[RMDB]
RNA sequence: GGGAACGACUCGAGUAGAGUCGAAAAGAUAUGGAUCAGAACUACGACGAAGUGAGCGUUGAAAAAUUUGUUACUGUCGGAAACGACAGUAACAAAUUUGGAGCUCACUAGUCGCUGAUCCUAAGUCCGUCUUUAUAGACUUCGGUCUAUAAAGACGAAAAGAAACAACAACAACAAC
Reactivity to DMS in 0.01 (KOAc 150mM, MgCl2 10mM, bicine 150mM(pH8.5), 24C), signal-to-noise 2, nucleotides 027 to 126: g020a070u010a300u010g000g000a010u000c000a050g000a150a120c140u020a300c040g020a030c010g010a140a250g020u000g000a010g010c010g000u000u030g000a020a040a000a020a000u000u000u000g010u000u000a010c000u010g020u000c000g010g010a070a100a210c000g000a010c000a000g000u000a000a000c000a000a000a000u000u000u000g000g000a120g000c010u000c000a010c000u000a160g000u000c020g000c030u010g010a000u000c020c000u000a040a140g000u010c040
Reactivity to 2A3 in 0.01 (KOAc 150mM, MgCl2 10mM, bicine 150mM(pH8.5), 24C), signal-to-noise 2, nucleotides 027 to 126: g040a010u150a050u270g010g020a000u030c010a000g040a210a150c200u300a130c300g010a000c000g070a300a040g000u000g000a010g000c050g210u300u150g010a020a050a040a030a000u000u000u030g000u000u000a000c000u010g000u020c000g050g000a070a090a000c000g000a000c010a000g000u010a010a000c000a000a010a000u000u000u000g020g000a010g000c000u020c030a000c000u010a010g010u000c000g000c000u000g000a000u030c020c000u010a170a030g090u060c040

The data come from the RNA Mapping Database (RMDB), library TTRINS. Structure probing data (DMS and 2A3) for a 177-nucleotide construct. Values are in units of 0.01, from 0 to 300, in steps of 10. Conditions: 150 mM KOAc, 10 mM MgCl2 and 150 mM bicine (pH 8.5), 24 C. The DMS profile rests on 2,203 reads. 2A3 adducts were read by reverse transcription with SuperScript II with manganese.